[RMDB]
RNA sequence: GGGAACGACUCGAGUAGAGUCGAAAAUAUCAAUUCCAAAUUGAUUAUGAAGUCCUCACAAAGCUUUGGACUUCCAGCUUCCAGAACCUUUUCUCUUAAGAGUGCCAAAUCUCCAAUGGAGUUGACAGGUAGUAGUCAUGUUCGCAUGACUACUACCAAAAGAAACAACAACAACAAC
Reactivity to DMS in 0.01 (KOAc 150mM, MgCl2 10mM, bicine 150mM(pH8.5), 24C), signal-to-noise 2, nucleotides 027 to 126: u010a040u010c030a020a040u000u000c220c120a090a070a010u020u000g030a030u000u000a030u040g000a010a030g040u000c000c000u000c060a080c140a090a120a150g020c080u030u000u000g000g020a000c010u020u000c010c250a120g020c120u000u000c010c030a110g000a080a090c070c090u000u000u000u000c030u020c030u010u060a090a110g020a120g000u000g020c060c010a060a050a020u050c000u000c000c030a070a100u020g010g000a030g000u010u010g010a080c120a140
Reactivity to 2A3 in 0.01 (KOAc 150mM, MgCl2 10mM, bicine 150mM(pH8.5), 24C), signal-to-noise 6, nucleotides 027 to 126: u170a000u020c010a000a000u100u050c110c060a130a120a030u020u020g010a010u020u100a070u220g050a020a000g010u000c010c000u030c020a050c040a040a280a030g050c110u080u040u040g010g000a010c000u000u000c020c000a030g020c030u060u010c020c000a060g040a160a090c030c010u060u050u030u040c040u020c010u090u130a140a030g020a010g030u070g060c030c010a010a130a210u060c030u010c010c010a130a220u210g020g000a030g000u040u060g050a050c040a020